About this RNA: Structure probing data (2A3 and DMS) for a 207-nucleotide construct. For 2A3, 9,828 sequencing reads were counted. 2A3 adducts were read by reverse transcription with SuperScript II with manganese.
RNA sequence: GGGAACGACUCGAGUAGAGUCGAAAAGCUACGCAUAUCAUUGAGAUGUCUGUGGGAGGAGUUGAUGUGUACUCUGAGGACGAUGAGGGUUACGGUACGUCUUUCAUUGAGUGGUGAUUUAUGCAUUAGGACUGCAUAGGGAUGCACUAUAGACCACGUCAUUUCAUAAGUUCGCUUAUGAAAUGACAAAAGAAACAACAACAACAAC
Reactivity to 2A3 in 0.01 (KOAc 150mM, MgCl2 10mM, bicine 150mM(pH8.5), 24C), signal-to-noise 8, nucleotides 027 to 156: g030c020u030a000c020g040c080a050u020a010u090c020a030u040u070g030a040g010a040u020g020u030c050u070g070u120g030g030g010a050g010g000a020g000u030u050g100a140u060g050u020g010u050a040c030u000c040u080g040a050g040g010a020c040g070a070u080g020a050g030g030g000u070u070a020c060g000g020u030a020c040g030u010c000u020u140u070c070a130u050u130g050a030g030u050g010g020u020g020a030u020u080u060a030u040g000c020a010u000u100a050g070g080a060c050u020g000c020a020u020a030g000g040g000a010u040g010c010a000c040u040a040u060a130g060a040c020c000a040c050
Reactivity to DMS in 0.01 (KOAc 150mM, MgCl2 10mM, bicine 150mM(pH8.5), 24C), signal-to-noise 3, nucleotides 027 to 156: g000c010u010a030c070g020c060a270u000a060u000c030a100u000u000g020a110g000a070u000g000u000c030u030g010u000g010g030g010a120g030g000a080g010u000u020g000a080u010g050u000g020u000a070c070u000c020u010g010a160g000g000a090c070g010a100u000g020a100g040g000g020u000u010a070c080g020g040u000a060c030g000u010c020u000u010u010c070a140u000u000g020a100g030u000g000g000u010g000a140u010u000u000a040u000g000c000a030u000u000a120g040g020a150c170u010g020c000a110u000a140g010g000g050a060u000g000c020a040c030u000a070u010a120g020a080c010c030a070c200